[RMDB]
RNA sequence: GGGAACGACUCGAGUAGAGUCGAAAAACAUCGAGGCUAAAGGAAGAAGAGAGAGAGUACAGCCUUAGUUCAGAUCACAUAUGACUAUCUUUUGCGAGUCUGAUCGAUACUCUGAUGAAGGCUGUACGUCGGAGAAAGAGUUCGCUCUUUCUCCGACAAAAGAAACAACAACAACAAC
Reactivity to 2A3 in 0.01 (KOAc 150mM, MgCl2 10mM, bicine 150mM(pH8.5), 24C), signal-to-noise 1, nucleotides 027 to 126: a010c000a040u060c020g020a040g040g000c070u070a070a020a050g050g020a020a050g000a120a000g030a040g000a000g000a010g000a020g020u010a000c000a000g000c010c000u030u030a050g040u040u000c000a010g000a020u050c020a010c020a130u160a060u190g000a000c000u020a040u180c010u020u240u200u300g090c100g000a000g000u010c030u040g030a040u100c020g000a000u020a080c020u000c020u070g000a010u050g030a020a000g020g000c020u000g000u000a020c000
Reactivity to DMS in 0.01 (KOAc 150mM, MgCl2 10mM, bicine 150mM(pH8.5), 24C), signal-to-noise 1, nucleotides 027 to 126: a080c090a060u010c060g010a110g000g030c130u010a050a090a020g000g020a030a040g000a030a050g010a090g010a090g000a120g050a170g010u000a010c020a010g000c000c010u000u000a080g020u000u000c030a010g020a020u010c100a080c210a130u020a040u000g000a100c070u000a100u010c010u000u020u000u020g020c110g030a010g000u000c000u000g030a060u000c140g010a050u000a080c210u000c090u000g030a030u030g000a050a030g000g040c030u000g000u000a000c000